[RMDB]
RNA sequence: GGGAACGACUCGAGUAGAGUCGAAAAUUAGGUUUUCUUCAUUUUCUUCUGGGAUUAUUUUUGUUGAAGAUUGAUGGAGAUGAUAUGAAGAUGAAAAGGACGAUAAAAAAACGUGCGUUCGCGCACGGCAAUAAAGACAGUUCGCUGUCUUUAUUGCAAAAGAAACAACAACAACAAC
Reactivity to 2A3 in 0.01 (KOAc 150mM, MgCl2 10mM, bicine 150mM(pH8.5), 24C), signal-to-noise 3, nucleotides 027 to 126: u070u070a070g120g000u010u090u070u070c000u000u000c000a020u090u090u020u050c000u030u030c030u050g150g110g020a050u060u110a110u170u260u060u140u150g220u080u090g010a050a050g030a040u040u190g010a040u030g010g010a020g000a000u030g010a000u040a010u130g050a030a030g070a070u090g060a030a060a010a000g090g010a020c090g050a070u180a090a130a020a010a000a020a020c010g000u000g020c000g010u000u030c220g010c000g000c060a000c000g000
Reactivity to DMS in 0.01 (KOAc 150mM, MgCl2 10mM, bicine 150mM(pH8.5), 24C), signal-to-noise 3, nucleotides 027 to 126: u000u000a120g000g010u000u010u000u000c000u000u000c010a010u000u000u010u000c000u010u000c010u010g010g000g010a050u000u010a070u010u000u000u000u020g020u010u010g010a070a130g010a040u000u000g010a120u000g000g000a010g000a020u000g000a040u010a050u000g020a040a050g000a060u000g000a040a040a090a080g010g010a060c060g010a100u010a000a000a060a060a040a030a210c010g000u000g010c010g020u000u020c260g040c020g010c000a010c010g000
The record gives the reactivity of an RNA of 177 nucleotides to 2A3 and DMS. It was measured as part of the RMDB library RFMREP. For 2A3, 2,817 sequencing reads were counted. High DMS reactivity at an A or C suggests that its Watson-Crick edge is free. For DMS, 3,831 sequencing reads were counted. Conditions: 150 mM KOAc, 10 mM MgCl2 and 150 mM bicine (pH 8.5), 24 C.